[RMDB]
RNA sequence: GGGAACGACUCGAGUAGAGUCGAAAAGUAACACGCGCACGCGGUGGCCCAACGCUUGUGGAGCGAGCUGUCGAAGGUGGGACUGGCGGUAGGGACGAAGCCGUAACAGCGUAACCGUAGCGCGUGGAAUUUUAUUUUAAUUCGUUAAAAUAAAAUUAAAAGAAACAACAACAACAAC
Reactivity to 2A3 in 0.01 (KOAc 150mM, MgCl2 10mM, bicine 150mM(pH8.5), 24C), signal-to-noise 9, nucleotides 027 to 126: g140u150a170a010c010a010c010g010c000g010c010a070c190g010c000g010g020u020g040g050c000c010c010a040a030c030g020c040u130u190g060u120g110g050a070g050c020g010a050g010c020u060g060u150c050g080a130a050g080g040u120g040g030g060a100c050u060g040g040c040g020g090u110a090g050g030g000a010c050g040a060a000g020c000c000g020u040a040a020c000a010g000c000g040u050a030a020c000c000g000u010a010g000c000g000c010g000u000g000g000
Reactivity to DMS in 0.01 (KOAc 150mM, MgCl2 10mM, bicine 150mM(pH8.5), 24C), signal-to-noise 9, nucleotides 027 to 126: g010u030a110a120c010a000c010g010c000g010c000a060c150g010c010g000g010u000g010g000c010c020c030a160a140c050g010c030u010u030g020u020g010g010a110g020c020g010a200g010c020u010g010u010c080g010a140a120g000g010u010g000g010g010a120c060u010g010g000c020g010g010u000a080g010g000g010a090c070g010a090a150g000c010c010g010u000a100a060c050a040g000c020g010u020a160a040c010c000g010u000a050g020c000g000c000g010u000g000g000
Structure probing data (2A3 and DMS) for a 177-nucleotide construct. Conditions: 150 mM KOAc, 10 mM MgCl2 and 150 mM bicine (pH 8.5), 24 C. For DMS the reverse transcriptase was MarathonRT.